[RMDB]
RNA sequence: GGGAACGACUCGAGUAGAGUCGAAAAGUUAUAAGACCUUUGAUAUUUAUAAUCUCUGGUCUACUUUUACAAAAGUUCAAGGUUUGGAAAACAUUGCUUUUAAUGUUGUUAAACAAGGCCAUUUUAUGUACUAAAUAAUGUUCGCAUUAUUUAGUACAAAAGAAACAACAACAACAAC
Reactivity to DMS in 0.01 (KOAc 150mM, MgCl2 10mM, bicine 150mM(pH8.5), 24C), signal-to-noise 3, nucleotides 027 to 126: g000u010u030a200u010a120a010g000a020c010c000u000u000u000g000a030u000a100u010u010u020a100u000a220a040u000c010u000c000u000g010g010u000c010u000a030c010u000u020u000u000a090c110a110a040a100a100g000u000u000c050a090a070g020g020u000u010u000g010g000a120a140a020a010c020a010u000u000g020c200u010u010u020u010a030a050u000g010u000u000g000u010u010a050a070a070c110a030a090g010g000c030c040a110u010u010u000u000a090u030
Reactivity to 2A3 in 0.01 (KOAc 150mM, MgCl2 10mM, bicine 150mM(pH8.5), 24C), signal-to-noise 2, nucleotides 027 to 126: g000u030u050a160u030a280a040g000a010c000c000u050u010u000g020a030u030a090u150u300u070a200u130a170a120u020c000u000c000u010g010g000u000c000u000a000c010u050u080u030u030a060c050a050a180a030a050g010u030u160c040a040a050g040g020u070u030u170g090g060a040a060a050a000c000a000u000u050g030c030u110u240u110u110a030a050u030g010u000u000g060u060u160a040a030a080c020a060a000g060g010c020c000a050u060u080u010u070a120u060